[RMDB]
RNA sequence: GGGAACGACUCGAGUAGAGUCGAAAAGCGUACUACAAGCGCUAACAGGCAACAGCGUAUAUGUAGCAAUCCCAAAUAGGAUUGUGAGGUAUACGACAUGCCUGGACCCGCUUGUAUCGCAAAGGUACCACUUGAGGUUCGCCUCAAGUGGUACCAAGCUUCAUAGAAUGUUCGCAUUCUAUGAAGCAAAAGAAACAACAACAACAAC
Reactivity to 2A3 in 0.01 (KOAc 150mM, MgCl2 10mM, bicine 150mM(pH8.5), 24C), signal-to-noise 6, nucleotides 027 to 156: g000c010g030u090a080c040u010a000c040a010a000g000c000g010c010u040a080a020c010a000g010g000c020a040a040c040a280g050c010g010u010a010u010a040u300g040u030a030g010c000a000a000u030c010c020c030a190a260a130u290a090g000g000a000u000u010g010u030g040a110g170g000u000a000u000a000c000g080a020c000a010u030g000c000c000u000g000g000a010c010c000c000g000c000u000u000g000u000a010u190c000g000c010a020a070a020g000g000u000a000c000c000a000c000u000u000g000a000g020g050u070u180c300g110c070c000u000c000a000a000g000u000g000g000u000a000c000c000a000a000
Reactivity to DMS in 0.01 (KOAc 150mM, MgCl2 10mM, bicine 150mM(pH8.5), 24C), signal-to-noise 4, nucleotides 027 to 156: g010c000g040u000a060c120u000a010c010a040a020g010c010g050c010u010a140a300c010a030g010g000c010a050a090c150a230g020c020g020u000a010u000a000u000g000u000a300g000c000a010a010u010c000c000c010a090a140a250u000a000g000g020a010u000u000g010u000g010a140g000g000u000a010u000a000c000g000a050c040a300u010g010c010c000u010g020g000a140c270c220c010g000c010u000u000g000u000a010u000c020g010c030a080a090a100g000g000u000a000c010c000a010c010u000u000g000a040g020g020u000u010c300g000c020c010u000c000a010a000g010u000g000g010u000a000c000c000a020a030
An RNA of 207 nucleotides, treated with 2A3 and DMS and read out base by base. 2A3 adducts were read by reverse transcription with SuperScript II with manganese. It was measured as part of the RMDB library RNAMAK. The DMS profile rests on 7,988 reads.